Chemical mapping of a 207-nucleotide RNA with 2A3 and DMS. The RNA was probed in 150 mM KOAc, 10 mM MgCl2 and 150 mM bicine (pH 8.5) at 24 C. The data come from the RNA Mapping Database (RMDB), library OK3TST.
RNA sequence: GGGAACGACUCGAGUAGAGUCGAAAAGUAAUUAGAGUUACCGACAAGUUAGGCGUUUUUAAUUCUGAUGUAGAGCUUAAAAACGGAUAUCAGAUUGAUAUAGACGGCGAGCGUUAUGUUAUGGUUGAAACAAGACCAAUCAGACCAACAAGCAUUAAACUAGUAAGUCCUUCGGGACUUACUAGUUAAAAGAAACAACAACAACAAC
Reactivity to 2A3 in 0.01 (KOAc 150mM, MgCl2 10mM, bicine 150mM(pH8.5), 24C), signal-to-noise 1, nucleotides 027 to 156: g020u080a000a090u050u100a070g020a000g100u020u030a060c020c010g030a060c040a080a040g000u020u040a000g020g010c010g020u000u010u010u010u010a030a040u050u020c040u020g070a080u150g020u110a040g020a000g120c060u030u080a100a000a050a000a000c010g070g000a000u020a010u040c020a000g110a180u050u070g020a030u050a000u020a060g060a010c040g000g000c020g010a010g000c010g030u120u030a000u070g000u070u000a010u060g050g030u030u010g000a010a000a030c050a090a080g020a070c050c000a000a000u070c000a000g050a050c000c000a000a070c030a060a000g040c070a030u170u300a080
Reactivity to DMS in 0.01 (KOAc 150mM, MgCl2 10mM, bicine 150mM(pH8.5), 24C), signal-to-noise 2, nucleotides 027 to 156: g020u000a030a050u010u000a090g010a170g030u000u000a060c030c020g000a100c050a110a100g000u000u000a060g050g020c010g050u000u000u000u000u020a020a080u000u010c020u000g020a060u000g020u020a080g010a120g050c080u000u000a040a070a070a110a040c020g000g000a060u010a030u000c010a070g000a130u000u000g010a060u000a070u000a040g010a090c050g020g030c090g010a060g000c030g000u000u000a070u010g010u000u010a060u000g000g000u000u020g000a110a110a040c050a060a100g000a090c010c020a040a060u000c060a080g020a090c050c040a050a030c030a060a070g020c020a050u010u000a060